[RMDB]
RNA sequence: GGGAACGACUCGAGUAGAGUCGAAAACGCUGAUUUCUUUUCAUCAGGACAUUCGAGGCUUUCCUUGCGAUAUGGACGUUCACGAAUCGGUCCUCGAAGUGUUGGAAGUCCAUCUUCUGCAAUGAGCCGCGUCAAUACCGCUGCAGAAGCAAUAGCGUCUCACUAUCGGGUUCGCCCGAUAGUGAGAAAAAGAAACAACAACAACAAC
Reactivity to 2A3 in 0.01 (KOAc 150mM, MgCl2 10mM, bicine 150mM(pH8.5), 24C), signal-to-noise 3, nucleotides 027 to 156: c010g010c010u030g120a190u000u010u040c030u030u090u050u030c050a080u040c080a160g050g050a130c100a130u250u260c170g010a020g010g000c010u050u090u060c060c000u030u050g030c020g040a030u000a010u080g010g000a010c060g060u030u030c000a000c050g030a050a070u020c010g030g110u190c110c070u050c050g030a040a030g030u030g060u180u110g050g020a030a030g010u000c000c000a040u010c130u080u000c060u140g000c000a010a070u100g000a040g020c030c030g020c000g020u000c010a010a070u040a190c020c000g000c020u030g000c050a020g000a040a020g020c030a000a030u040a040g010c010g010
Reactivity to DMS in 0.01 (KOAc 150mM, MgCl2 10mM, bicine 150mM(pH8.5), 24C), signal-to-noise 1, nucleotides 027 to 156: c150g060c020u010g050a050u000u000u000c010u000u000u030u000c100a140u000c070a080g080g030a080c070a140u000u010c010g000a020g000g000c000u030u010u020c150c090u020u000g040c020g000a040u000a040u000g010g000a040c030g000u000u010c000a180c030g060a080a150u000c020g010g000u000c120c030u000c020g010a040a070g010u000g020u000u010g040g010a070a050g000u000c000c010a000u000c060u000u000c010u020g020c020a010a120u000g030a040g010c040c020g030c070g020u000c140a040a080u010a060c050c020g030c030u000g000c050a060g000a110a070g000c120a050a080u000a000g000c060g020